[RMDB]
RNA sequence: GGGAACGACUCGAGUAGAGUCGAAAACUGGGAAAACCCAACUGACAGCACAAGAACUAGCAGAGAAGUUGGAAUGUCUCAGCCUGUUUUUGGGUUGGGAUAACAGUCUUCCCUUGAGACUGUGUAAUAUUAGAUCGACGUUCGCGUCGAUCUAAUAAAAAGAAACAACAACAACAAC
Reactivity to DMS in 0.01 (KOAc 150mM, MgCl2 10mM, bicine 150mM(pH8.5), 24C), signal-to-noise 1, nucleotides 027 to 126: c000u000g000g040g000a130a090a130a170c200c000c000a020a030c000u000g000a200c120a140g020c030a210c120a080a090g010a090a050c130u000a110g070c020a040g020a060g010a150a050g010u000u000g010g060a120a160u000g000u020c010u000c000a030g030c000c000u000g010u010u000u000u000u020g010g040g020u000u000g000g010g000a070u000a050a030c040a040g000u000c030u010u000c030c070c030u000u030g010a070g010a080c000u000g020u000g000u010a090a090